[RMDB]
RNA sequence: GGGAACGACUCGAGUAGAGUCGAAAAUCACACACUAAAAGACAUCUGACGUAGCUUUGCACAAUACGAUAAUGUCAUAGUUCUCUUGCAAAGAACUGACAUCAGGUGUCUUACGAAAGUGUGUGAAGAUAGUUAUCUCAUUCGUGAGGUAGCUAUCAAAAGAAACAACAACAACAAC
Reactivity to DMS in 0.01 (KOAc 150mM, MgCl2 10mM, bicine 150mM(pH8.5), 24C), signal-to-noise 9, nucleotides 027 to 126: u000c000a010c000a010c000a010c000u000a070a080a030a010g000a010c000a000u000c000u000g000a160c030g010u000a040g010c070u010u010u030g010c090a100c300a080a090u020a040c060g010a120u040a110a080u020g010u000c090a100u060a100g010u000u000c020u010c040u010u040g000c170a070a110a000g000a040a040c020u010g010a010c020a060u000c030a000g010g000u000g000u000c000u000u010a020c220g010a100a100a030g010u000g010u000g000u000g000a010a050
Reactivity to 2A3 in 0.01 (KOAc 150mM, MgCl2 10mM, bicine 150mM(pH8.5), 24C), signal-to-noise 9, nucleotides 027 to 126: u020c000a000c000a000c000a000c000u040a130a110a000a000g000a000c000a000u000c000u010g010a020c020g020u020a010g030c050u080u090u180g030c060a060c050a150a150u110a090c060g060a050u090a170a100u190g070u090c040a070u070a070g010u040u000c020u000c000u040u100g030c050a050a030a010g010a060a090c020u040g070a010c010a020u010c000a000g000g000u000g000u000c000u000u010a000c000g150a140a050a030g000u000g000u000g000u000g000a000a000
Annotation:
An RNA of 177 nucleotides, treated with DMS and 2A3 and read out base by base. The 2A3 profile rests on 125,916 reads. Reactivities are rounded to 0.1 and cut off at 0 and 3. Source: RMDB library OK1LIB, as collected in RNAgym. The RNA was probed in 150 mM KOAc, 10 mM MgCl2 and 150 mM bicine (pH 8.5) at 24 C. The DMS profile rests on 36,783 reads.